[RMDB]
RNA sequence: GGGAACGACUCGAGUAGAGUCGAAAAUGAGACACCUUCGGGUGUCUCACAUAAAGCUGACCAGCUAUGAGGUCAAUAUCGUCAUGCACAAAUAGAAUAAAACAGCUUGCUCCUUCGGGAGCAAGAAGAUAAAUAUAUACUUCGGUAUAUAUUUAUCAAAAGAAACAACAACAACAAC
Reactivity to DMS in 0.01 (KOAc 150mM, MgCl2 10mM, bicine 150mM(pH8.5), 24C), signal-to-noise 2, nucleotides 027 to 126: u000g000a030g000a010c000a000c000c000u000u000c240g060g040g010u010g000u010c000u000c000a030c080a090u010a070a090a150g010c120u000g000a090c030c010a160g000c050u010a050u000g000a090g000g010u000c050a030a060u010a060u000c100g000u000c060a020u000g020c020a120c130a050a070a070u000a050g010a060a130u030a080a070a080a060c120a070g000c000u010u000g000c000u000c000c000u000u010c240g030g000g000a010g000c010a000a000g010a020a100
Reactivity to 2A3 in 0.01 (KOAc 150mM, MgCl2 10mM, bicine 150mM(pH8.5), 24C), signal-to-noise 2, nucleotides 027 to 126: u030g000a000g000a010c000a000c010c000u010u050c240g030g010g000u010g020u000c000u010c000a000c000a000u110a010a050a000g000c020u020g030a040c010c010a010g000c040u160a050u170g090a040g000g020u030c010a030a110u200a080u060c100g060u020c070a040u080g060c090a010c040a090a130a020u170a100g130a160a080u150a110a110a020a020c030a010g090c000u010u000g000c020u000c000c000u010u080c180g070g010g000a000g000c000a000a000g000a000a000

Chemical mapping of a 177-nucleotide RNA with DMS and 2A3.
Reactivities are given for positions 27 through 126.
The reactions ran in a buffer of 150 mM KOAc, 10 mM MgCl2 and 150 mM bicine (pH 8.5), at 24 C.
The data come from the RNA Mapping Database (RMDB), library M2PK50.
For 2A3, 1,764 sequencing reads were counted.
For 2A3 the reverse transcriptase was SuperScript II with manganese.